[RMDB]
RNA sequence: GGGAACGACUCGAGUAGAGUCGAAAACCCCUCGGAGAUCCACUGGGUGGGUUCACAUCCCCAACCCGCGGGCCGGCUGUUCUUCUUUCUCUUUCCUCGUCUUCCUCGGUCAACCUCCGGAGUUCCUCACGCGACGCCUUCGGGCGUCGCAAAAGAAACAACAACAACAAC
Reactivity to 2A3 in 0.01 (KOAc 150mM, MgCl2 10mM, bicine 150mM(pH8.5), 24C), signal-to-noise 3, nucleotides 027 to 129: c000c000c000c040u010c030g050g000a080g010a060u030c030c020a050c110u120g020g020g000u100g010g030g010u110u100c070a020c020a070u040c000c020c000c000a020a090c020c010c000g020c000g010g020g040c000c000g040g060c040u040g020u070u020c020u050u040c000u030u030u030c040u000c000u030u040u000c000c000u020c000g020u000c050u130u070c020c030u050c030g000g010u060c010a030a020c000c000u000c000c000g020g000a040g010u000u000c000c010u040c010a020c070
Reactivity to DMS in 0.01 (KOAc 150mM, MgCl2 10mM, bicine 150mM(pH8.5), 24C), signal-to-noise 3, nucleotides 027 to 129: c010c000c000c080u040c090g010g040a130g020a000u020c040c120a060c070u000g050g040g000u030g050g010g000u020u010c100a160c200a130u010c000c000c000c000a090a190c020c020c040g000c080g030g020g020c030c080g040g070c160u030g030u030u010c020u020u060c010u000u060u040c020u000c020u020u010u000c040c010u020c060g050u020c080u030u010c060c000u060c050g100g010u010c080a070a080c130c060u000c020c000g040g010a090g180u020u080c060c000u000c050a090c060

Structure probing data (2A3 and DMS) for a 170-nucleotide construct. The RNA was probed in 150 mM KOAc, 10 mM MgCl2 and 150 mM bicine (pH 8.5) at 24 C.